[RMDB]
The record gives the reactivity of an RNA of 177 nucleotides to DMS. For DMS the reverse transcriptase was MarathonRT. For DMS, 666 sequencing reads were counted.
RNA sequence: GGGAACGACUCGAGUAGAGUCGAAAAUCGAGACGGUUUCCUUCGCUGCGCUCAGUUCACCUCCUCAGGAUGAGGGGGAGGGCAACCUCAGGAAGCCUGUUUCAGUUCGAGCCGGCGGCGAUGCAGAGUGCCUACCGGUCUUCGGACCGGUAGGCACAAAAGAAACAACAACAACAAC
Reactivity to DMS in 0.01 (KOAc 150mM, MgCl2 10mM, bicine 150mM(pH8.5), 24C), signal-to-noise 1, nucleotides 027 to 126: u010c020g000a020g000a060c010g000g010u000u030u000c000c010u010u000c300g000c080u000g140c140g050c000u000c040a230g030u000u020c150a150c050c000u000c010c010u000c070a180g020g010a170u000g020a000g000g000g000g000g000a000g000g010g020c000a020a180c030c040u000c160a050g070g000a010a180g000c010c000u010g010u000u000u010c150a090g000u000u000c090g050a070g010c060c070g030g010c260g030g010c060g000a040u000g140c090a100g010a130